[RMDB]
RNA sequence: GGGAACGACUCGAGUAGAGUCGAAAAACCAUGGGUAAAAGGAUUUUUCUUGGGGUAUAAAAAAAAAACCAGAUUUAAAUUUAGCCCAAGGGUUGAUGAGGUAUUUUCCUCAAGAAGGUUGCUCACUCUGCAUAUAUGAAUUCGUUCAUAUAUGCAGAAAAGAAACAACAACAACAAC
Reactivity to 2A3 in 0.01 (KOAc 150mM, MgCl2 10mM, bicine 150mM(pH8.5), 24C), signal-to-noise 1, nucleotides 027 to 126: a020c000c000a000u000g000g000g020u110a010a030a100a130g020g010a070u020u040u040u040u150c080u170u090g030g000g000g020u060a030u300a130a130a050a050a000a000a000a000a000a000c020c000a040g070a120u000u000u260a030a020a020u030u020u040a030g000c000c000c000a000a100g050g010g000u000u070g030a110u080g000a030g000g050u040a150u140u140u120u110c000c000u010c000a010a000g080a000a000g070g000u060u070g010c000u020c050a010c010u000

Structure probing data (2A3) for a 177-nucleotide construct. It was measured as part of the RMDB library RFM100. The RNA was probed in 150 mM KOAc, 10 mM MgCl2 and 150 mM bicine (pH 8.5) at 24 C.